[RMDB]
RNA sequence: GGGAACGACUCGAGUAGAGUCGAAAACGUAAUGAAUCGUGAAGACCCCCGUUGAUAAGGAAUAAGGGCAGGUCACGUUGCUAUUGGUUAUCUAUACCAGUCUGCUUGGUUGCCCGGAGCUAUAAAACACUGACUAAAUCUUCGGAUUUAGUCAGUGAAAAGAAACAACAACAACAAC
Reactivity to 2A3 in 0.01 (KOAc 150mM, MgCl2 10mM, bicine 150mM(pH8.5), 24C), signal-to-noise 1, nucleotides 027 to 126: c020g020u050a220a000u280g110a120a130u240c020g000u010g030a030a140g090a130c010c010c010c000c020g050u030u050g100a150u040a080a040g040g010a070a080u060a050a100g000g030g000c040a010g060g040u050c000a000c010g000u010u050g000c050u040a050u020u030g000g030u070u060a050u150c150u100a000u070a100c000c000a020g000u010c010u010g000c010u000u020g010g060u040u010g000c000c000c000g000g010a010g000c030u070a000u150a180a100a000a000
Reactivity to DMS in 0.01 (KOAc 150mM, MgCl2 10mM, bicine 150mM(pH8.5), 24C), signal-to-noise 3, nucleotides 027 to 126: c020g010u030a120a110u020g010a170a050u000c040g020u010g030a120a120g000a170c070c020c000c040c050g020u010u010g010a090u010a100a070g000g010a050a090u000a170a190g000g000g010c000a010g000g000u000c010a020c070g000u000u000g000c170u000a030u000u000g010g000u000u000a120u000c200u010a120u000a040c010c010a020g010u000c020u000g000c000u010u000g010g000u000u000g010c020c010c000g000g010a090g010c120u000a080u000a060a070a080a150